RNA sequence: GGGAACGACUCGAGUAGAGUCGAAAAGGGAGUAUCAGAAGGCGCAAGGGUACGAACGUUUCAACGUAAAGGUUGCCGCGCAAUUCAAACUGGCCGCGACCCAGGAAAUCAGCUAUCGCCUUCAGUCAGUAGCAAACUGGUUCGCCAGUUUGCUACUAAAAGAAACAACAACAACAAC
Reactivity to DMS in 0.01 (KOAc 150mM, MgCl2 10mM, bicine 150mM(pH8.5), 24C), signal-to-noise 2, nucleotides 027 to 126: g000g030g000a300g010u000a040u030c030a180g040a070a020g000g030c020g010c160a090a150g030g020g020u000a100c080g010a130a080c060g000u000u000u000c040a050a150c080g000u010a030a170a100g000g000u000u000g010c190c130g010c040g050c060a010a080u010u000c210a030a080a110c250u000g000g000c000c080g000c020g000a000c060c030c040a240g000g000a010a030a000u000c110a150g000c100u000a040u000c040g030c010c050u010u000c050a150g000u000c100

Source: RMDB library OK2TRN, as collected in RNAgym. Structure probing data (DMS) for a 177-nucleotide construct. For DMS, 784 sequencing reads were counted.